[RMDB]
RNA sequence: GGGAACGACUCGAGUAGAGUCGAAAAGAUAUGGACAAGGUUGCCUCUAUGCAGUGAUGACCUCGGAAACGAGCAAGCUGUCAUAGAUAAGCUUGUCCUAAGUCAAAGGCGCACUUCGGUGCGCCAACCUGACUCAUAUCUUCGGAUAUGAGUCAGGAAAAGAAACAACAACAACAAC
Reactivity to DMS in 0.01 (KOAc 150mM, MgCl2 10mM, bicine 150mM(pH8.5), 24C), signal-to-noise 2, nucleotides 027 to 126: g000a080u000a300u020g000g000a000c020a000a030g000g010u000u000g000c300c190u000c010u000a010u000g000c000a020g010u000g020a060u000g000a100c300c000u000c030g000g000a120a130a190c000g000a010g010c030a060a150g020c000u000g000u000c000a000u020a000g000a020u000a140a040g010c000u000u000g000u000c000c000u000a010a090g000u000c030a040a120a140g010g000c010g050c030a000c000u000u010c200g030g000u010g010c010g000c000c000a000a030
Reactivity to 2A3 in 0.01 (KOAc 150mM, MgCl2 10mM, bicine 150mM(pH8.5), 24C), signal-to-noise 2, nucleotides 027 to 126: g000a010u090a030u190g000g010a000c020a020a010g150g180u210u030g110c010c010u040c000u000a010u010g020c020a010g000u040g100a300u190g010a090c030c040u000c010g040g000a080a080a030c000g010a000g010c020a100a070g000c020u060g090u300c020a000u000a000g010a010u040a010a000g090c000u020u020g000u000c000c000u020a130a010g060u000c050a010a040a270g000g000c000g030c010a020c030u090u130c300g100g000u000g000c010g000c000c000a000a000